[RMDB]
RNA sequence: GGGAACGACUCGAGUAGAGUCGAAAAGAGGAACACCGUGUCCCAGAGGGUCUUGAGCGUCUCUAUCAUGACUCCGCCGCAGGCCCGGAGGGGAGCGUCGCUCCUUCCACGGCCUCCUUCAUGAGGAGGAGGCAGCGGAAUUCGUUCCGCUGCCUCCAAAAGAAACAACAACAACAAC
Reactivity to DMS in 0.01 (KOAc 150mM, MgCl2 10mM, bicine 150mM(pH8.5), 24C), signal-to-noise 1, nucleotides 027 to 126: g000a080g000g030a060a040c080a240c120c060g050u000g010u010c020c000c020a130g010a220g000g000g000u000c000u000u010g000a200g020c030g000u000c190u020c020u010a180u000c170a120u000g000a040c010u000c110c120g030c030c020g000c170a070g020g010c030c010c030g000g010a190g010g010g000g000a160g010c020g000u000c230g020c010u000c020c020u000u000c020c020a050c100g000g020c010c000u000c020c010u000u000c080a130u000g000a120g000g000a150
Reactivity to 2A3 in 0.01 (KOAc 150mM, MgCl2 10mM, bicine 150mM(pH8.5), 24C), signal-to-noise 1, nucleotides 027 to 126: g110a030g000g050a060a030c050a010c050c050g020u010g180u020c000c000c040a020g120a040g050g020g000u000c030u070u090g030a060g000c020g070u060c000u040c010u060a190u230c030a060u070g010a010c040u000c040c110g000c000c020g090c080a000g000g000c030c000c090g000g060a060g000g000g050g010a030g030c050g240u180c100g030c030u020c000c000u100u010c000c020a080c070g000g000c020c010u000c020c000u130u160c030a140u180g060a060g020g050a060